[RMDB]
RNA sequence: GGGAACGACUCGAGUAGAGUCGAAAAAUCCUCUUUAGACUCUUGUACCCCUAAAUUUGGCGGGGCUUGUGCCCUGUCAUUUGCUUUUCUUGUAAGACAAUAGCGUCGCAAGACAACAGUGGAGCUACACCGGGUCACGAUUCGUCGUGACCCGGUGAAAAGAAACAACAACAACAAC
Reactivity to 2A3 in 0.01 (KOAc 150mM, MgCl2 10mM, bicine 150mM(pH8.5), 24C), signal-to-noise 1, nucleotides 027 to 126: a000u060c060c000u020c060u140u150u140a180g000a170c010u000c000u050u120g090u210a150c000c000c000c040u110a050a050a060u080u020u000g000g000c000g000g000g000g000c000u060u300g030u200g000c030c000c000u000g000u010c000a000u010u010u010g030c010u120u000u000u000c000u000u050g000u060a000a280g000a010c030a030a130u070a230g080c140g150u000c010g000c000a010a010g120a030c020a130a130c000a180g070u060g070g050a070g020c040u010a000

Conditions: 150 mM KOAc, 10 mM MgCl2 and 150 mM bicine (pH 8.5), 24 C.
Chemical mapping of a 177-nucleotide RNA with 2A3.
2A3 is a SHAPE reagent: it acylates the 2'-hydroxyl of flexible nucleotides of all four kinds.